[RMDB]
Chemical mapping of a 177-nucleotide RNA with 2A3 and DMS. Reactivities are rounded to 0.1 and cut off at 0 and 3. The 2A3 profile rests on 969 reads. 2A3 adducts were read by reverse transcription with SuperScript II with manganese. The DMS profile rests on 1,321 reads.
RNA sequence: GGGAACGACUCGAGUAGAGUCGAAAAUCGGUUCCUGUGGAAGUUGCUCAAGGUUCUCACGUUACCGGUGCAACAAUGAACACCUCUGGGCGUUUGCUGGUCACUGCCCAGCGCGUGGGUGCCGACAACUCGGCACGGAAUUCGUUCCGUGCCGAGUAAAAGAAACAACAACAACAAC
Reactivity to 2A3 in 0.01 (KOAc 150mM, MgCl2 10mM, bicine 150mM(pH8.5), 24C), signal-to-noise 1, nucleotides 027 to 126: u040c030g020g030u010u000c000c020u000g000u100g100g000a170a170g000u030u080g060c040u010c170a090a100g030g010u060u020c010u010c030a050c020g010u030u030a080c040c030g000g000u030g030c000a070a050c010a040a200u190g000a070a020c010a020c010c010u000c010u060g000g010g020c020g070u140u190u070g020c030u050g080g050u180c000a010c170u160g000c000c000c000a000g010c040g000c000g000u030g000g000g000u030g010c000c000g020a000c020a030
Reactivity to DMS in 0.01 (KOAc 150mM, MgCl2 10mM, bicine 150mM(pH8.5), 24C), signal-to-noise 2, nucleotides 027 to 126: u010c030g000g020u000u000c020c000u000g010u030g000g000a120a200g000u000u010g010c060u010c090a090a210g010g010u010u000c050u000c070a090c180g000u000u000a030c120c170g020g030u000g030c020a030a020c050a120a110u000g010a130a230c040a020c010c010u000c100u010g000g010g000c030g010u000u000u010g000c030u010g010g020u030c110a080c140u020g020c030c000c010a020g010c300g020c090g000u010g010g000g010u000g000c000c010g000a100c170a080